[RMDB]
RNA sequence: GGGAACGACUCGAGUAGAGUCGAAAAUAGGUGGGUGGAUGAAGGAACAGCCCUGGUUUCCUAUCACUCUCCCUGCUCCCACCCACUAGAACGGAAGGCCUGACUGGUUGGUGCUUGUGCCUCCAACGAGAAAUUCAUCUUUCGAGAUGAAUUUCUCAAAAGAAACAACAACAACAAC
Reactivity to DMS in 0.01 (KOAc 150mM, MgCl2 10mM, bicine 150mM(pH8.5), 24C), signal-to-noise 3, nucleotides 027 to 126: u000a090g020g030u000g000g000g020u000g000g000a120u000g010a120a060g000g010a060a050c190a100g000c030c010c010u010g000g000u000u000u000c010c030u000a110u000c050a080c140u010c070u000c050c010c010u000g000c090u000c090c010c000a030c000c000c020a040c000u000a070g000a100a100c160g000g010a070a050g000g030c020c030u000g000a110c050u000g000g000u010u000g000g020u000g000c090u000u000g010u000g010c100c020u000c020c020a090a140c200